An RNA of 177 nucleotides, treated with 2A3 and DMS and read out base by base. For 2A3 the reverse transcriptase was SuperScript II with manganese. Reactivities are rounded to 0.1 and cut off at 0 and 3.
RNA sequence: GGGAACGACUCGAGUAGAGUCGAAAAGUCACUGCGUCAGCUAUAAUCAGCUGAUAUUUUCCUUCCUUUGUAUCUCCUUUAUACUCAUCAAUGGCAAUAAUAGCUGGCAAUUCCUCUACGGGACGAAAUCUCUAGGAGGUUUCGACCUCCUAGAGAUAAAAGAAACAACAACAACAAC
Reactivity to 2A3 in 0.01 (KOAc 150mM, MgCl2 10mM, bicine 150mM(pH8.5), 24C), signal-to-noise 3, nucleotides 027 to 126: g040u020c030a010c150u090g030c050g040u010c000a010g000c000u030a040u030a200a150u140c100a000g010c020u030g040a010u040a070u070u040u020u010c010c000u030u070c000c020u050u140u080g070u060a070u050c030u040c000c010u030u110u080a150u060a070c040u010c040a090u020c020a150a130u120g040g000c040a010a010u100a190a030u040a070g000c010u010g010g000c020a040a090u040u010c000c010u030c020u100a050c090g030g030g020a000c010g060a060a270
Reactivity to DMS in 0.01 (KOAc 150mM, MgCl2 10mM, bicine 150mM(pH8.5), 24C), signal-to-noise 4, nucleotides 027 to 126: g020u000c050a090c050u000g030c120g010u000c010a010g030c010u000a060u000a160a110u010c200a040g010c020u000g010a030u000a030u000u010u000u000c020c020u000u010c020c020u000u010u010g010u010a050u010c040u000c030c040u000u000u000a090u000a120c050u000c050a080u010c070a070a090u010g020g010c050a080a090u000a060a070u010a070g010c020u010g010g020c040a070a180u000u000c020c010u010c100u010a060c150g000g000g000a100c100g000a050a100